[RMDB]
RNA sequence: GGGAACGACUCGAGUAGAGUCGAAAAGAUAUGGACGUGCGCAGAGAGGUAGGGAAAUUCGGAAACGAACACCCUACUACCCACCUCUGCCACGUCCUAAGUCAAAACGCGCAGUUCGCUGCGCGAAGGUUGUUAAAAGCUUCGGCUUUUAACAACCAAAAGAAACAACAACAACAAC
Reactivity to DMS in 0.01 (KOAc 150mM, MgCl2 10mM, bicine 150mM(pH8.5), 24C), signal-to-noise 1, nucleotides 027 to 126: g000a020u040a300u010g000g000a100c000g000u000g030c280g000c000a050g000a040g040a110g000g000u000a020g000g000g000a060a090a300u000u000c000g000g010a110a050a060c000g000a020a010c300a300c000c000c000u010a000c050u000a050c120c020c200a300c120c000u010c000u000g000c000c000a000c040g080u000c000c000u000a000a100g000u000c010a030a050a090a030c000g000c020g000c000a000g000u000u010c240g000c020u000g000c000g020c020g020a040a020
Reactivity to 2A3 in 0.01 (KOAc 150mM, MgCl2 10mM, bicine 150mM(pH8.5), 24C), signal-to-noise 1, nucleotides 027 to 126: g010a030u080a020u100g000g000a000c010g000u000g010c180g000c070a000g000a000g040a090g160g000u010a010g060g000g040a090a170a030u080u030c030g000g000a060a020a070c010g030a030a000c040a110c040c000c000u000a010c000u010a030c000c020c040a120c000c000u030c010u020g000c010c010a010c000g000u020c000c000u000a000a000g000u030c030a020a000a060a110c000g000c000g010c010a030g030u080u160c200g080c190u000g000c010g000c010g010a010a030
This 177-nucleotide RNA was probed chemically with DMS and 2A3. Values are in units of 0.01, from 0 to 300, in steps of 10.